Notes
Conditions: 150 mM KOAc, 10 mM MgCl2 and 150 mM bicine (pH 8.5), 24 C. This 170-nucleotide RNA was probed chemically with DMS and 2A3.
RNA sequence: GGGAACGACUCGAGUAGAGUCGAAAAGAUGGGCCUCAGUGCCGACGAGGAGUCCGCAGGUGGGAGGAUCAGCCACCGGAGAGGGACGCGAUGGUAAGAGUGGAGGAAAGUUCGGAGGGAAAUCCCAAUGGCCGAACCUUCGGGUUCGGCAAAAGAAACAACAACAACAAC
Reactivity to DMS in 0.01 (KOAc 150mM, MgCl2 10mM, bicine 150mM(pH8.5), 24C), signal-to-noise 1, nucleotides 027 to 129: g050a090u030g100g000g070c100c050u020c100a070g070u000g190c110c000g030a150c060g000a120g030g000a110g010u040c080c060g000c070a120g030g140u050g000g050g000a000g050g000a080u060c130a080g000c040c080a130c010c060g010g020a000g010a020g030g020g040a040c160g000c040g000a130u040g010g000u000a040a020g000a020g080u070g050g000a050g040g160a000a000a000g060u050u030c010g000g080a090g000g000g000a000a030a120u070c020c030c050a070a000u070g040
Reactivity to 2A3 in 0.01 (KOAc 150mM, MgCl2 10mM, bicine 150mM(pH8.5), 24C), signal-to-noise 2, nucleotides 027 to 129: g010a000u080g010g100g020c000c130u090c040a110g030u100g120c010c020g010a030c020g010a000g000g000a010g030u010c000c070g080c040a020g000g020u030g060g010g000a080g060g030a030u040c050a000g080c000c030a010c020c000g000g000a020g010a000g030g010g000a000c050g010c000g130a000u090g000g030u000a080a000g030a040g040u060g020g030a000g000g000a010a010a010g070u080u050c020g010g020a000g000g000g060a050a000a030u070c000c040c000a000a040u110g090
For DMS the reverse transcriptase was MarathonRT. For 2A3, 2,558 sequencing reads were counted. It was measured as part of the RMDB library 15KLIB. The DMS profile rests on 4,157 reads.